Chemical mapping of a 177-nucleotide RNA with 2A3 and DMS. Source: RMDB library OK2TST, as collected in RNAgym. The 2A3 profile rests on 1,028 reads.

RNA sequence: GGGAACGACUCGAGUAGAGUCGAAAACAGUCAUGGAUCGACUGCCCCAUGGCAUGCACCGCGUGGCGCUGCGUCCGGUCGAUGAACAAGGUACCCGCGCCGGCGGCAAGGUAGCCGAUGACCGGCACGGGCCCAUAGGUUUCGACCUAUGGGCCCGAAAAGAAACAACAACAACAAC
Reactivity to 2A3 in 0.01 (KOAc 150mM, MgCl2 10mM, bicine 150mM(pH8.5), 24C), signal-to-noise 1, nucleotides 027 to 126: c020a010g000u000c020a010u200g120g050a190u130c030g060a060c030u090g090c000c000c000c000a030u080g120g020c060a060u060g020c020a030c090c000g000c090g050u090g010g030c050g000c040u040g000c040g020u010c010c020g040g060u070c040g140a150u130g030a020a040c060a120a030g110g000u160a130c000c010c000g010c030g020c000c010g000g000c050g000g000c000a020a060g170g030u100a030g030c020c030g010a110u100g120a060c000c000g000g020c020a040
Reactivity to DMS in 0.01 (KOAc 150mM, MgCl2 10mM, bicine 150mM(pH8.5), 24C), signal-to-noise 1, nucleotides 027 to 126: c050a120g020u000c000a080u000g000g010a150u000c100g010a000c000u000g000c050c040c010c040a110u020g000g010c010a070u000g000c080a120c000c060g000c170g020u020g030g000c000g010c050u000g030c150g010u000c050c000g040g010u000c040g010a120u020g010a080a050c040a030a120g010g010u000a080c030c000c170g000c090g000c020c010g000g000c010g000g050c100a120a060g000g010u000a140g000c010c000g000a210u050g040a160c050c000g010g010c150a160